RNA sequence: GGGAACGACUCGAGUAGAGUCGAAAAUCGGUGCCCAGACUGGCGAAGGCGCGCGUAACCCGGCGAAUUUCAUCGACGGUAAGAAAGCCUUUAUUGGUGACGCCGCUCGGUUUGUAGCCAUCCGGCAGAUUGCUCCAUACUUCGGUAUGGAGCAAUCAAAAGAAACAACAACAACAAC
Reactivity to DMS in 0.01 (KOAc 150mM, MgCl2 10mM, bicine 150mM(pH8.5), 24C), signal-to-noise 2, nucleotides 027 to 126: u000c070g000g000u000g010c020c000c070a120g000a100c080u000g040g000c020g020a160a090g050g000c020g000c200g010c000g020u010a270a140c220c040c010g000g020c000g000a020a120u000u000u010c170a160u000c000g000a060c010g000g010u010a120a140g000a100a140a300g000c010c020u000u010u010a190u030u000g000g000u010g000a170c100g010c000c010g000c060u000c040g010g000u000u000u000g020u000a240g010c020c010a060u000c010c070g030g010c140a100
Reactivity to 2A3 in 0.01 (KOAc 150mM, MgCl2 10mM, bicine 150mM(pH8.5), 24C), signal-to-noise 1, nucleotides 027 to 126: u090c000g040g030u080g000c010c000c000a020g030a050c030u050g020g000c070g110a090a060g070g000c030g000c010g050c010g040u050a070a090c000c000c000g040g000c020g040a050a090u170u240u240c120a150u070c070g020a030c040g000g000u030a050a040g110a130a070a030g020c000c030u090u180u060a300u160u150g000g030u070g000a020c010g000c010c000g000c030u030c020g070g030u020u060u080g070u000a000g010c000c000a040u030c020c000g000g000c000a010